Chemical mapping of a 177-nucleotide RNA with DMS and 2A3. The DMS profile rests on 2,806 reads. Reactivities are given for positions 27 through 126. The reactions ran in a buffer of 150 mM KOAc, 10 mM MgCl2 and 150 mM bicine (pH 8.5), at 24 C. The 2A3 profile rests on 1,109 reads.

RNA sequence: GGGAACGACUCGAGUAGAGUCGAAAAUUGUCGACGUAAAUUGUUGGGACUAUCGCCACGAAGUAUUGGAACAUUUCCAUUUCUGAUUGAAGGGGUUAGUGUUGGGAGGAAGGGAGGUGGAGCAGGAUGCUGGAAAAGUAUUCGUACUUUUCCAGCAAAAAGAAACAACAACAACAAC
Reactivity to DMS in 0.01 (KOAc 150mM, MgCl2 10mM, bicine 150mM(pH8.5), 24C), signal-to-noise 3, nucleotides 027 to 126: u010u000g020u010c020g020a080c100g030u010a050a080a140u000u020g010u010u000g030g000g020a120c040u020a090u000c060g030c010c030a100c090g000a060a090g010u010a040u000u020g000g000a040a110c160a120u000u000u000c010c020a100u000u000u000c010u000g010a150u000u000g000a090a090g010g000g000g010u000u000a080g020u010g020u000u010g000g010g020a100g020g010a110a100g000g010g000a080g000g000u010g000g000a100g000c100a070g000g000a150
Reactivity to 2A3 in 0.01 (KOAc 150mM, MgCl2 10mM, bicine 150mM(pH8.5), 24C), signal-to-noise 2, nucleotides 027 to 126: u150u060g050u060c020g000a050c020g060u140a010a120a210u090u110g030u010u080g080g000g030a020c020u030a030u140c060g030c080c020a060c030g010a030a000g080u140a100u030u060g030g020a020a050c050a300u030u090u020c010c040a000u050u120u030c080u050g170a300u230u050g050a050a050g050g000g000g020u010u060a060g050u090g120u100u050g040g050g000a190g040g030a080a020g020g030g010a100g060g060u070g030g020a010g020c010a000g040g020a040